[RMDB]
Chemical mapping of a 177-nucleotide RNA with 2A3 and DMS. The data come from the RNA Mapping Database (RMDB), library TTRDES. High 2A3 reactivity points to a flexible backbone, as in loops and unpaired stretches. DMS adducts were read by reverse transcription with MarathonRT. The RNA was probed in 150 mM KOAc, 10 mM MgCl2 and 150 mM bicine (pH 8.5) at 24 C. High DMS reactivity at an A or C suggests that its Watson-Crick edge is free.

RNA sequence: GGGAACGACUCGAGUAGAGUCGAAAAGAUAUGGAUCACCCAUGGGAGCCUAUGUGUCGGAAACGACAUUUAGGCGAAGAACAUGGUGAUCCUAAGUCAAACCUCGGUAGGUUCGCCUACCGAGGAACUUAGACGAUAGCUUCGGCUAUCGUCUAAGAAAAGAAACAACAACAACAAC
Reactivity to 2A3 in 0.01 (KOAc 150mM, MgCl2 10mM, bicine 150mM(pH8.5), 24C), signal-to-noise 1, nucleotides 027 to 126: g000a000u020a000u020g010g000a000u020c010a010c080c270c040a090u010g000g030g070a300g040c010c000u000a010u010g010u000g000u000c010g000g020a000a000a000c000g020a000c000a000u020u030u000a010g020g040c010g040a020a030g010a010a000c000a000u020g040g000u000g020a010u000c000c000u000a000a010g020u010c020a120a020a300c000c000u010c010g000g000u020a020g000g060u060u080c300g090c140c000u040a000c000c000g010a000g000g010a000a010
Reactivity to DMS in 0.01 (KOAc 150mM, MgCl2 10mM, bicine 150mM(pH8.5), 24C), signal-to-noise 1, nucleotides 027 to 126: g000a000u000a020u000g010g000a020u000c000a010c300c070c080a010u000g000g000g000a070g010c020c000u030a000u000g010u000g000u000c010g030g000a010a000a020c000g010a010c010a010u000u000u000a000g000g000c010g030a090a110g000a120a180c000a000u000g000g040u000g000a010u000c000c000u020a000a150g000u000c000a130a120a240c000c000u000c000g010g030u000a000g000g010u000u050c300g010c000c000u000a000c000c010g010a000g000g000a000a040